[RMDB]
RNA sequence: GGGAACGACUCGAGUAGAGUCGAAAAAUUCCCUCUCCAAAGGGCUGACUGUGUGCCACUUUCAGGAACAGCAAUUUGGAAGAAAGCCAGGCAUGCCUGAGGUCUUUGAUGAACAAGGAAUACUUGUUAAACUACCGAUGUUCGCAUCGGUAGUUUAAAAAGAAACAACAACAACAAC
Reactivity to DMS in 0.01 (KOAc 150mM, MgCl2 10mM, bicine 150mM(pH8.5), 24C), signal-to-noise 3, nucleotides 027 to 126: a240u000u010c010c000c000u020c090u030c030c020a030a000a020g000g000g000c020u000g000a170c110u000g000u020g010u020g010c060c010a140c070u000u000u000c010a060g000g020a120a190c090a020g000c180a070a050u030u040u000g000g010a120a080g010a010a020a050g010c010c080a080g000g010c040a070u000g010c000c020u010g000a290g020g020u000c010u000u000u020g000a160u010g010a060a020c070a040a040g010g000a120a070u030a140c000u000u000g000u000
Reactivity to 2A3 in 0.01 (KOAc 150mM, MgCl2 10mM, bicine 150mM(pH8.5), 24C), signal-to-noise 3, nucleotides 027 to 126: a000u030u010c000c000c000u000c040u040c000c010a050a020a050g060g000g010c010u020g010a080c020u010g070u050g030u050g180c020c000a030c000u000u040u010c020a060g140g060a160a110c000a000g160c020a030a160u110u070u160g110g000a080a010g040a050a080a000g030c040c060a010g010g000c010a040u140g070c010c000u010g010a000g020g000u010c000u020u050u080g070a120u050g030a010a030c050a070a030g030g010a140a070u080a130c010u010u000g000u030